[RMDB]
RNA sequence: GGGAACGACUCGAGUAGAGUCGAAAAGCACGUAGGUUCAGAUGAUGGGCCCGCAUCUGUACGAAAGAAAGACGAAAGUCCAGCCUACGUGCAUGAGCACGCGGGCCCCGUGCUCUACAGCAAAAGAAGCAUAAUAUCCGUUCGCGGAUAUUAUGCUAAAAGAAACAACAACAACAAC
Reactivity to DMS in 0.01 (KOAc 150mM, MgCl2 10mM, bicine 150mM(pH8.5), 24C), signal-to-noise 3, nucleotides 027 to 126: g000c000a010c010g060u000a000g000g000u000u020c070a020g020a020u000g010a050u040g000g000g030c000c000c000g020c030a010u000c000u000g000u080a150c140g000a100a110a180g000a100a160a090g010a010c000g010a080a070a140g000u000c010c090a020g040c000c000u000a000c000g010u010g000c000a000u000g020a200g000c000a010c020g020c210g000g000g000c010c000c020c010g000u000g010c000u000c020u000a110c080a140g000c110a070a030a100a060g010a150
Reactivity to 2A3 in 0.01 (KOAc 150mM, MgCl2 10mM, bicine 150mM(pH8.5), 24C), signal-to-noise 5, nucleotides 027 to 126: g000c000a000c000g000u000a000g000g020u100u100c040a010g000a070u070g010a020u080g020g000g000c000c000c000g010c000a000u000c000u040g130u140a070c120g160a120a050a080g160a030a120a020g010a010c020g050a160a030a020g010u000c020c010a000g000c000c000u000a000c010g000u000g000c000a000u010g000a010g000c010a010c010g000c050g020g010g000c020c000c000c000g000u000g000c000u000c000u020a100c040a090g110c070a020a110a060a040g170a090
Structure probing data (DMS and 2A3) for a 177-nucleotide construct. The data come from the RNA Mapping Database (RMDB), library OK1LIB. Conditions: 150 mM KOAc, 10 mM MgCl2 and 150 mM bicine (pH 8.5), 24 C.